[RMDB]
RNA sequence: GGGAACGACUCGAGUAGAGUCGAAAAGAUAUGGACCUGCUACCCACCUCCAAAAAGGGACGAAGAACUGAAGCAUCGGAAACGAUGCUUCAGGGAGUCCUACAAAGGAGAGGCAGGUCCUAAGUCAUCUUAUAUGAGAGUUCGCUCUCAUAUAAGAAAAAGAAACAACAACAACAAC
Reactivity to DMS in 0.01 (KOAc 150mM, MgCl2 10mM, bicine 150mM(pH8.5), 24C), signal-to-noise 4, nucleotides 027 to 126: g020a110u010a070u010g000g000a010c000c000u000g000c010u000a120c100c040c090a300c140c000u000c000c010a050a110a050a160a250g000g000g020a020c010g010a080a120g010a240a260c010u000g000a020a000g020c010a000u000c000g000g000a030a050a110c000g010a010u000g000c010u000u000c000a000g000g000g000a030g000u000c000c000u010a040c200a110a170a170g010g010a010g000a100g010g010c020a020g000g010u010c000c000u000a010a040g000u010c050a180
Reactivity to 2A3 in 0.01 (KOAc 150mM, MgCl2 10mM, bicine 150mM(pH8.5), 24C), signal-to-noise 2, nucleotides 027 to 126: g060a030u120a150u140g000g000a000c000c010u010g000c020u200a270c030c070c060a030c030c000u000c020c000a040a110a000a080a130g050g000g000a020c010g300a300a050g010a020a000c000u000g010a000a010g000c000a010u000c000g000g020a020a020a000c000g000a010u020g000c000u020u000c010a010g000g000g000a000g000u000c000c000u000a050c050a010a160a010g000g010a010g000a000g010g030c000a000g010g000u000c000c000u010a000a000g000u000c000a050